[RMDB]
RNA sequence: GGGAACGACUCGAGUAGAGUCGAAAACAUGAUCAAAGAAGAAGUGAAAGAUUACAACAUGAGAGCAGGAUUAACUAGGUGGUUGGAGGAUGCAAUAGAAAGACUGGACGCGGACGAUGUGUACCGUGCACUGAGACGCACACUGGACAGACUUGCAAACACUUGCCUAUUUCGAUAGGCAAGUGUUAAAAGAAACAACAACAACAAC
Reactivity to 2A3 in 0.01 (KOAc 150mM, MgCl2 10mM, bicine 150mM(pH8.5), 24C), signal-to-noise 3, nucleotides 027 to 156: c020a040u110g040a080u160c090a140a090a020g060a040a020g020a040a010g060u040g090a140a020a030g070a050u080u110a080c020a150a000c040a120u070g030a030g000a000g060c030a010g010g000a020u030u080a080a040c040u030a060g050g040u010g020g000u040u040g010g000a000g000g030a020u010g030c010a000a060u040a110g060a020a030a000g030a020c040u030g050g030a010c040g000c010g050g000a010c020g000a130u070g040u000g000u070a080c020c020g010u010g040c010a010c100u080g030a080g010a040c000g020c010a010c010a020c050u020g000g000a000c000a010g020a030c010u020u100g020c000a010
Reactivity to DMS in 0.01 (KOAc 150mM, MgCl2 10mM, bicine 150mM(pH8.5), 24C), signal-to-noise 2, nucleotides 027 to 156: c020a140u000g010a080u000c040a080a070a080g010a090a130g000a100a070g030u010g000a130a020a100g000a120u000u000a080c000a070a080c070a080u010g010a100g000a020g020c040a070g000g000a150u000u000a020a030c070u000a120g000g000u000g040g020u000u000g010g010a040g020g000a060u010g010c040a040a060u020a170g010a090a070a100g020a070c020u000g010g000a140c080g030c020g000g030a090c040g000a070u000g020u010g000u000a070c080c090g010u020g020c090a080c050u000g000a180g000a120c090g020c020a050c030a110c070u000g010g000a140c040a110g010a130c080u000u010g010c030a130